[RMDB]
This 177-nucleotide RNA was probed chemically with DMS and 2A3.
RNA sequence: GGGAACGACUCGAGUAGAGUCGAAAAUAUCCAUGUUUACUACUACUUUUCAUCUCUUUUUCACUGAAAUGUCGAGUAUUUUUGCGAUGCAUGGUAAAGAAAUCAAGGUGACCAGGUUUCUUUUCAAACUCAACAUGAAUUUCGAUUCAUGUUGAGUAAAAGAAACAACAACAACAAC
Reactivity to DMS in 0.01 (KOAc 150mM, MgCl2 10mM, bicine 150mM(pH8.5), 24C), signal-to-noise 4, nucleotides 027 to 126: u020a110u020c020c010a050u010g000u000u000u000a100c050u000a070c190u000a040c020u000u000u000u010c030a020u010c040u000c010u000u010u020u030u010c200a100c140u000g010a050a020a030u000g010u000c050g000a070g010u000a010u000u000u000u000u020g010c080g000a050u000g000c020a020u000g000g010u010a040a060a050g010a030a040a050u010c080a070a120g000g000u010g010a110c050c030a130g010g010u000u000u000c000u000u010u000u000c190a060a110
Reactivity to 2A3 in 0.01 (KOAc 150mM, MgCl2 10mM, bicine 150mM(pH8.5), 24C), signal-to-noise 7, nucleotides 027 to 126: u140a050u020c020c010a030u060g050u040u150u070a070c050u010a020c010u010a020c010u040u050u020u030c030a080u020c020u020c020u070u110u050u170u160c090a110c090u100g020a040a040a030u030g020u040c030g010a010g000u000a040u020u070u020u070u040g080c090g030a020u060g010c020a050u050g010g040u130a030a060a010g060a010a050a010u080c040a060a060g070g020u060g070a050c010c010a020g030g060u000u000u010c000u010u020u010u040c100a100a100